Annotation
Chemical mapping of a 177-nucleotide RNA with 2A3 and DMS. The RNA was probed in 150 mM KOAc, 10 mM MgCl2 and 150 mM bicine (pH 8.5) at 24 C. For 2A3 the reverse transcriptase was SuperScript II with manganese.
[RMDB]
RNA sequence: GGGAACGACUCGAGUAGAGUCGAAAAUAGUCUCAACAGAUGACGACACUUCUGUUCAAUCUCAUAUCCUAUCCAUACUGGAUGUAAAACACGCAUGUGGCGCUGACUGGUGCGUUAACCAGUUUUUAAUGUUAGCUAUCUUCGGAUAGCUAACAUUAAAAGAAACAACAACAACAAC
Reactivity to 2A3 in 0.01 (KOAc 150mM, MgCl2 10mM, bicine 150mM(pH8.5), 24C), signal-to-noise 1, nucleotides 027 to 126: u090a000g050u030c030u020c070a000a010c020a000g090a050u070g120a080c060g150a010c040a000c110u000u040c030u020g050u070u050c040a100a120u050c040u010c120a070u070a040u160c010c000u020a010u020c020c000a000u040a050c010u000g010g010a000u040g090u170a010a020a000a000c110a050c040g100c050a060u070g030u000g030g020c000g000c020u020g030a020c000u000g020g000u000g010c000g040u070u030a000a020c010c010a000g000u000u000u000u000u000
Reactivity to DMS in 0.01 (KOAc 150mM, MgCl2 10mM, bicine 150mM(pH8.5), 24C), signal-to-noise 1, nucleotides 027 to 126: u000a130g000u000c050u020c060a090a130c080a070g000a050u010g010a200c100g020a110c190a080c040u000u000c060u000g010u000u000c150a090a140u030c070u010c110a170u010a020u010c020c010u010a090u000c020c000a010u000a000c060u000g000g010a000u000g000u020a020a020a020a030c090a050c090g000c120a090u000g030u000g000g000c010g030c010u010g000a030c000u030g000g040u000g000c020g010u010u010a000a010c000c010a030g000u000u000u010u000u000